Chemical mapping of a 177-nucleotide RNA with DMS and 2A3. For DMS, 1,082 sequencing reads were counted. It was measured as part of the RMDB library TTRDEL.
[RMDB]
RNA sequence: GGGAACGACUCGAGUAGAGUCGAAAAGAUAUGGAGCCAUACGAAGGCUAUGAAGUCGGAAACGAUGGAGCCUGUAUCGGCUCCUAAGUCAAACCAUUCAGACCGACUUCGGUCGGUCUGAAUGGAACAGUGCAAGCUAGUUCGCUAGCUUGCACUGAAAAGAAACAACAACAACAAC
Reactivity to DMS in 0.01 (KOAc 150mM, MgCl2 10mM, bicine 150mM(pH8.5), 24C), signal-to-noise 1, nucleotides 027 to 126: g000a040u010a300u000g020g000a020g040c000c010a030u000a010c020g040a100a090g000g020c000u000a130u010g000a180a220g000u020c020g000g000a180a130a250c010g010a010u000g000g000a010g010c000c000u000g010u010a050u000c200g010g000c010u000c010c010u010a010a040g000u000c030a080a120a160c000c000a000u000u000c020a010g000a030c010c000g010a020c010u000u020c230g000g010u020c010g010g000u000c000u000g020a010a000u000g000g020a030a040
Reactivity to 2A3 in 0.01 (KOAc 150mM, MgCl2 10mM, bicine 150mM(pH8.5), 24C), signal-to-noise 1, nucleotides 027 to 126: g050a000u070a080u130g010g000a000g030c020c020a010u030a020c090g300a300a090g000g000c060u070a300u280g020a010a020g010u000c010g000g080a110a040a040c010g000a000u030g030g030a000g030c030c040u000g030u010a030u140c210g030g020c000u000c010c000u000a000a000g000u050c050a060a060a080c000c000a000u010u000c000a000g010a000c000c020g000a060c070u010u060c120g030g000u010c000g000g000u010c010u000g040a000a000u010g010g000a040a000

Conditions: 150 mM KOAc, 10 mM MgCl2 and 150 mM bicine (pH 8.5), 24 C. The 2A3 profile rests on 1,332 reads. DMS adducts were read by reverse transcription with MarathonRT.